[RMDB]
RNA sequence: GGGAACGACUCGAGUAGAGUCGAAAAGGGCACGCGGCCGGCGUCGAGCCAGCGCCGCACCGUGCGCGUGGCCACCUUCCGCUGCGCUGCGAACGCGUCAAUCGAGAUCAUGGCGGUGGCCGGCCGCCUGGAAGCACGGAUUCGUCCGUGCUUCCAGAAAAGAAACAACAACAACAAC
Reactivity to DMS in 0.01 (KOAc 150mM, MgCl2 10mM, bicine 150mM(pH8.5), 24C), signal-to-noise 2, nucleotides 027 to 126: g040g000g010c070a110c110g020c020g020g010c070c030g000g000c010g000u010c080g010a230g000c010c040a080g000c050g000c030c030g000c150a010c100c110g050u000g030c030g010c000g030u000g000g000c000c030a100c060c030u020u000c070c020g000c020u000g010c030g060c020u010g000c060g040a080a100c150g020c040g000u010c140a080a060u010c170g000a120g010a080u000c080a080u030g000g010c120g010g000u000g010g000c010c000g010g000c010c000g010c010
Reactivity to 2A3 in 0.01 (KOAc 150mM, MgCl2 10mM, bicine 150mM(pH8.5), 24C), signal-to-noise 1, nucleotides 027 to 126: g010g000g040c040a000c090g000c000g000g010c020c000g000g000c000g000u150c030g020a050g010c010c000a040g030c010g010c020c000g050c010a000c030c010g020u080g010c030g000c070g110u080g000g000c050c020a060c040c060u160u050c020c010g000c040u020g000c030g000c020u010g090c020g060a100a050c010g020c030g140u080c070a040a230u090c100g060a040g020a230u170c050a080u170g000g000c020g050g010u030g060g000c000c050g000g000c020c000g030c000

Conditions: 150 mM KOAc, 10 mM MgCl2 and 150 mM bicine (pH 8.5), 24 C. This 177-nucleotide RNA was probed chemically with DMS and 2A3. The data come from the RNA Mapping Database (RMDB), library OK2TST. For 2A3, 1,196 sequencing reads were counted.